RNA sequence: GGGAACGACUCGAGUAGAGUCGAAAAAUUUAACCGCCAGGACGGUCACCUUUGGGGUGGUGACAAGUGUGAUCACUUGGGUGGUGGCUGUGUUUGCGCUUCUCCCAGGAAUCUCGUUUACCAGAUCGAUAGGACGUAUCUUCGGAUACGUCCUAUCAAAAGAAACAACAACAACAAC
Reactivity to DMS in 0.01 (KOAc 150mM, MgCl2 10mM, bicine 150mM(pH8.5), 24C), signal-to-noise 2, nucleotides 027 to 126: a100u020u030u050a060a110c160c040g000c020c030a020g010g010a030c090g000g010u010c010a020c020c000u000u000u000g000g000g000g000u000g010g000u010g000a090c000a160a080g000u040g000u010g010a060u000c040a060c020u010u000g020g000g020u000g000g020u000g000g010c040u020g010u010g020u030u020u020g000c060g010c100u000u000c110u000c040c000c010a140g020g000a080a010u030c060u010c010g000u000u000u020a260c020c020a040g000a080u010c120
Reactivity to 2A3 in 0.01 (KOAc 150mM, MgCl2 10mM, bicine 150mM(pH8.5), 24C), signal-to-noise 4, nucleotides 027 to 126: a000u150u200u100a050a040c010c020g000c010c010a020g030g060a020c000g020g000u010c010a020c010c010u080u130u170g060g000g010g000u020g030g000u060g020a020c010a080a080g160u160g030u050g240a100u050c000a010c000u050u040g120g000g010u030g020g040u010g000g000c010u010g020u000g080u080u060u090g010c020g000c010u050u030c020u020c030c000c000a010g040g040a020a060u020c050u000c030g000u000u020u070a180c020c020a060g020a130u120c040